[RMDB]
RNA sequence: GGGAACGACUCGAGUAGAGUCGAAAAGGCCGACCGGUCCAGGGCGGCCAGCACCUGGUCGCGGCCCGCCGAGGGCAGCGCGAGCGCCACCUCCGCGACACCGGCCCGGCGGUACUCGUGCAGGGUCUCGAUUAAGUACUUUCGAGUACUUAAUCGAAAAAGAAACAACAACAACAAC
Reactivity to DMS in 0.01 (KOAc 150mM, MgCl2 10mM, bicine 150mM(pH8.5), 24C), signal-to-noise 7, nucleotides 027 to 126: g000g000c000c020g010a070c050c010g010g010u010c140c120a100g020g000g010c030g000g010c070c070a040g020c100a080c030c030u000g010g020u000c020g020c030g010g010c250c010c030g010c070c070g010a160g030g000g010c020a080g020c020g020c050g000a080g000c110g010c050c060a080c070c020u000c050c030g000c040g010a130c110a080c120c060g010g020c030c040c040g020g010c000g010g010u000a040c080u000c020g020u000g010c050a160g010g000g000u000c080
Reactivity to 2A3 in 0.01 (KOAc 150mM, MgCl2 10mM, bicine 150mM(pH8.5), 24C), signal-to-noise 5, nucleotides 027 to 126: g000g030c010c020g080a240c030c030g060g100u110c050c050a060g020g040g010c030g040g020c030c000a000g020c010a040c000c030u020g050g090u170c010g000c000g040g080c000c000c010g020c040c030g090a220g000g020g020c040a040g030c030g010c040g030a030g010c020g060c020c010a090c030c020u020c030c010g020c000g080a070c040a050c100c040g060g000c010c070c020g000g000c010g020g000u060a110c060u060c050g030u060g030c040a100g040g010g030u010c020